RNA sequence: GGGAACGACUCGAGUAGAGUCGAAAAGAUAUGGAUGUCUAGCACGUCUAUGAAGAUACUCGGAAACGAGUAUUGGAGACGCACUAGAGCAUCCUAAGUCAAACGCUAGUAGUUCGCUACUAGCGAAGAGCAUAUUCUAGUUCGCUAGAAUAUGCUCAAAAGAAACAACAACAACAAC
Reactivity to DMS in 0.01 (KOAc 150mM, MgCl2 10mM, bicine 150mM(pH8.5), 24C), signal-to-noise 6, nucleotides 027 to 126: g000a040u000a300u000g000g000a020u000g010u010c010u000a000g040c120a100c010g010u000c000u000a260u020g010a190a190g010a000u000a000c000u000c000g000g000a150a130a170c010g010a010g000u000a000u000u000g000g000a010g020a010c010g010c120a110c000u000a010g000a140g010c010a010u000c000c000u010a030a140g010u010c040a130a130a290c030g010c010u000a010g010u000a010g010u010u010c300g010c000u000a010c000u000a000g000c000g010a020a060
Reactivity to 2A3 in 0.01 (KOAc 150mM, MgCl2 10mM, bicine 150mM(pH8.5), 24C), signal-to-noise 7, nucleotides 027 to 126: g020a020u060a040u150g010g010a010u010g030u010c010u010a010g010c090a020c110g010u000c010u040a300u120g010a010a000g010a010u000a000c000u000c000g000g030a050a070a040c010g020a010g000u000a000u000u010g000g020a020g000a010c030g010c040a020c010u020a010g060a080g100c010a000u010c000c000u000a080a010g040u010c050a100a040a110c020g000c000u000a000g000u010a000g010u060u060c300g020c170u000a000c010u000a000g000c000g000a020a020